An RNA of 177 nucleotides, treated with 2A3 and read out base by base.
For 2A3 the reverse transcriptase was SuperScript II with manganese.
Reactivities are given for positions 27 through 126.
[RMDB]
RNA sequence: GGGAACGACUCGAGUAGAGUCGAAAACAAGAUAGCGUCUCGGAGCCAAAUUGACGGUUUCGUAAUAGGACGUCAGAGUCCAAGGGCGACCGUUCUGCUGGAAUGCACGCUUCCGGUGGGCAAGCACGCGUGGUGCCGUGUUCGCACGGCACCACGCAAAAGAAACAACAACAACAAC
Reactivity to 2A3 in 0.01 (KOAc 150mM, MgCl2 10mM, bicine 150mM(pH8.5), 24C), signal-to-noise 1, nucleotides 027 to 126: c060a010a030g050a070u080a000g000c000g000u000c020u020c110g020g000a000g000c000c020a040a100a260u260u280g000a110c110g030g000u000u100u000c000g040u040a010a040u070a100g080g000a040c000g000u060c070a000g010a080g160u000c150c000a110a110g090g000g000c000g000a030c100c000g060u120u080c040u060g000c030u070g000g010a040a050u160g000c000a000c080g020c000u020u020c020c000g000g120u000g070g070g000c040a000a000g190c060a060c080